[RMDB]
RNA sequence: GGGAACGACUCGAGUAGAGUCGAAAAAUAGGAAUCAAUUUUACGAAAUAUCUUGGCUUUCGUGCUUCGGUUUGGUUGGCAUGGGUUGUCCGAGAUCAUUUCGAUGACCUAUGUCGAAGGGAUAUCUAUAUGAGAUAUGAUCUGAUCGACUGCGUAAGUUUUUGACUAGUUUCGACUAGUCAAAAACAAAAGAAACAACAACAACAAC
Reactivity to 2A3 in 0.01 (KOAc 150mM, MgCl2 10mM, bicine 150mM(pH8.5), 24C), signal-to-noise 2, nucleotides 027 to 156: a010u080a030g050g060a080a130u060c040a050a060u070u130u220u300a080c020g000a010a000a000u030a000u010c010u010u010g010g000c000u000u010u030c010g000u010g010c030u060u060c070g210g080u170u180u250g150g020u080u120g030g000c010a020u010g020g040g080u080u010g030u020c000c010g000a000g000a010u050c070a030u020u030u010c000g010a000u030g020a020c000c010u020a030u070g000u000c020g000a040a040g050g010g010a000u010a010u010c010u030a120u070a200u300g230a050g010a030u020a010u010g120a190u000c010u030g050a130u040c010g020a010c020u060g020c060g100u090a140a180
Reactivity to DMS in 0.01 (KOAc 150mM, MgCl2 10mM, bicine 150mM(pH8.5), 24C), signal-to-noise 2, nucleotides 027 to 156: a120u000a060g000g010a170a120u010c050a060a090u010u010u000u000a160c050g000a070a030a060u000a040u000c010u020u010g020g040c060u000u000u010c030g080u000g000c040u010u000c110g050g030u010u010u010g040g010u000u020g030g030c030a020u000g030g000g020u000u000g020u000c020c020g020a040g000a040u010c120a050u010u000u000c040g020a120u010g000a190c010c010u010a030u000g000u000c010g000a050a160g000g020g010a090u000a020u000c020u010a260u000a090u010g010a050g000a020u010a020u000g000a130u010c010u000g000a180u000c000g000a040c030u010g000c070g020u000a080a190